[RMDB]
RNA sequence: GGGAACGACUCGAGUAGAGUCGAAAAGAUAUGGAGCUGACAUAAAGCAACAGCUGCAUUCGGAAACGAAUGCAGACAUGCUUGUGUAGCUCCUAAGUCAAAGCGUUGGGGCUUCGGCCCCAACGCAGAUGUUUAGAUAGUUCGCUAUCUAAACAUCAAAAGAAACAACAACAACAAC
Reactivity to 2A3 in 0.01 (KOAc 150mM, MgCl2 10mM, bicine 150mM(pH8.5), 24C), signal-to-noise 2, nucleotides 027 to 126: g000a000u040a040u100g000g010a020g050c010u120g170a060c010a030u290a190a300a010g010c080a080a120c090a240g010c000u010g000c000a000u020u010c000g040g000a020a020a040c010g020a000a000u000g020c010a000g000a000c000a050u270g000c010u020u010g000u010g020u040a000g020c000u010c010c000u000a050a000g050u020c050a100a110a060g000c020g010u010u050g010g010g000g000c010u130u170c300g170g060c000c070c030c010a020a000c020g000c000a030
Reactivity to DMS in 0.01 (KOAc 150mM, MgCl2 10mM, bicine 150mM(pH8.5), 24C), signal-to-noise 2, nucleotides 027 to 126: g030a010u010a300u000g000g000a000g020c000u010g010a050c000a070u000a240a020a010g040c010a040a170c270a180g000c000u000g000c000a000u010u000c010g010g000a130a080a160c000g010a010a010u010g020c000a020g020a040c060a270u000g000c000u000u000g010u010g030u000a050g000c000u010c000c000u010a010a030g000u000c000a090a130a130g000c020g000u020u000g010g090g000g000c000u010u010c270g050g020c000c000c000c000a000a000c000g040c000a000